An RNA of 207 nucleotides, treated with DMS and 2A3 and read out base by base.
2A3 is a SHAPE reagent: it acylates the 2'-hydroxyl of flexible nucleotides of all four kinds.
It was measured as part of the RMDB library ARCHII.
RNA sequence: GGGAACGACUCGAGUAGAGUCGAAAAGCAUUUGCCAGCGGGAAAGGUGCCCGGUACGAAUCCUGGGGUCGUCGUUGUACUCGUGCGAGUAAUCCACGAUGCUACAAGGCGCUAAGCAAUGGAAGUGAUACUUGAGGGAAGCAAUUCUGCAGAGACACUGAUAUUAGUGCUUCGGCACUAAUAUCAGAAAAGAAACAACAACAACAAC
Reactivity to DMS in 0.01 (KOAc 150mM, MgCl2 10mM, bicine 150mM(pH8.5), 24C), signal-to-noise 1, nucleotides 027 to 156: g020c040a180u000u000u010g030c000c010a120g050c040g000g020g010a050a070a150g030g030u000g000c010c040c030g020g040u000a170c070g020a180a050u020c030c040u000g010g010g010g000u020c050g030u000c010g030u010u000g010u000a010c100u000c010g010u000g030c100g030a050g010u020a130a190u020c010c020a020c000g010a030u000g040c020u000a000c020a010a060g000g010c000g000c100u000a050a090g000c030a130a090u000g010g020a070a100g000u000g000a080u000a000c040u000u000g000a120g010g000g000a140a120g010c020a030a080u000u010c030u000g000c010a140g000a170g000a070c050a090
Reactivity to 2A3 in 0.01 (KOAc 150mM, MgCl2 10mM, bicine 150mM(pH8.5), 24C), signal-to-noise 2, nucleotides 027 to 156: g020c000a030u040u060u250g040c020c030a010g010c000g040g000g010a060a120a020g120g000u040g040c000c020c030g020g000u090a070c050g070a020a030u060c000c010u050g000g000g000g020u050c010g010u010c030g080u010u000g010u000a010c010u010c000g010u000g020c130g010a000g060u110a030a090u020c000c000a000c010g010a030u140g030c020u010a010c000a000a000g020g000c000g020c070u070a030a020g020c040a020a120u070g010g020a040a010g030u030g060a060u050a130c010u030u050g030a040g060g000g010a030a000g040c010a010a090u110u010c020u100g020c020a010g020a000g000a130c000a000

Values cover nucleotides 27 to 156.